[RMDB]
RNA sequence: GGGAACGACUCGAGUAGAGUCGAAAAGGAAUCGUGACAGUGGUAGAUCUAGCAGGGGGUUCUAUCGUAAACGGCCGGAUAGAACCCUGUGCACGCGGUCCGCCCGCGGCUGUCGGGUUCCGGCCAACCAUUUUCUCAGAUUCGUCUGAGGAAGUGGAAAAGAAACAACAACAACAAC
Reactivity to 2A3 in 0.01 (KOAc 150mM, MgCl2 10mM, bicine 150mM(pH8.5), 24C), signal-to-noise 9, nucleotides 027 to 126: g010g010a010a010u030c080g190u120g020a000c010a010g010u030g050g080u130a110g050a230u140c060u110a030g030c030a040g000g020g000g010g020u000u000c000u000a000u000c010g100u110a060a110a200c090g080g020c070c030g080g000a000u000a000g020a000a000c000c000c000u010g020u000g000c020a010c020g000c000g000g020u050c070c180g030c020c010c000g000c000g000g000c000u000g000u000c000g000g000g000u000u000c000c000g000g000c000c000a010a030
Reactivity to DMS in 0.01 (KOAc 150mM, MgCl2 10mM, bicine 150mM(pH8.5), 24C), signal-to-noise 8, nucleotides 027 to 126: g010g000a010a000u000c010g010u030g020a010c010a010g010u000g010g010u010a090g000a080u040c040u010a150g000c010a060g010g000g000g010g000u000u000c000u000a000u000c020g010u030a060a100a120c120g010g000c050c040g010g000a010u000a010g000a010a010c000c000c000u000g010u010g010c010a060c030g010c020g000g000u020c180c180g000c140c010c140g010c030g000g000c010u000g000u000c010g010g000g010u000u000c000c000g000g000c020c020a080a140